The record gives the reactivity of an RNA of 177 nucleotides to 2A3 and DMS. For DMS, 129,434 sequencing reads were counted. Conditions: 150 mM KOAc, 10 mM MgCl2 and 150 mM bicine (pH 8.5), 24 C.

[RMDB]
RNA sequence: GGGAACGACUCGAGUAGAGUCGAAAAGCACGAUAGGAAGUAGGCUGAUGCAGCGCGGCAGCGCGAGGAAUGAAGCCCUACGGGUCGUAAACGUCCUUCAGCAGGGACGAUGCGUGAGUCGCGGCACAAUAAUUAUGUUAUUCGUAACAUAAUUAUUAAAAGAAACAACAACAACAAC
Reactivity to 2A3 in 0.01 (KOAc 150mM, MgCl2 10mM, bicine 150mM(pH8.5), 24C), signal-to-noise 9, nucleotides 027 to 126: g060c030a010c080g060a060u100a090g140g100a130a020g040u090a040g070g000c020u010g010a040u060g010c050a070g070c000g000c010g080g000c040a050g010c020g000c020g030a060g020g100a080a070u200g050a070a020g030c020c000c000u030a040c090g030g000g020u040c020g020u050a040a080a090c020g010u010c010c000u080u080c070a130g040c050a040g030g000g010a010c010g010a060u090g010c010g010u050g030a060g020u010c010g000c020g030g010c030a020c020
Reactivity to DMS in 0.01 (KOAc 150mM, MgCl2 10mM, bicine 150mM(pH8.5), 24C), signal-to-noise 9, nucleotides 027 to 126: g010c060a060c060g010a070u020a070g000g010a090a100g010u010a040g000g010c030u000g010a110u010g010c080a110g010c020g020c020g000g000c120a260g000c020g010c010g010a090g000g010a100a070u020g000a170a120g000c060c010c020u010a070c080g010g010g010u010c020g000u010a030a080a120c030g000u000c000c000u000u010c150a140g010c180a100g000g000g000a010c000g000a050u020g000c020g010u000g000a120g010u000c020g010c040g000g010c070a080c160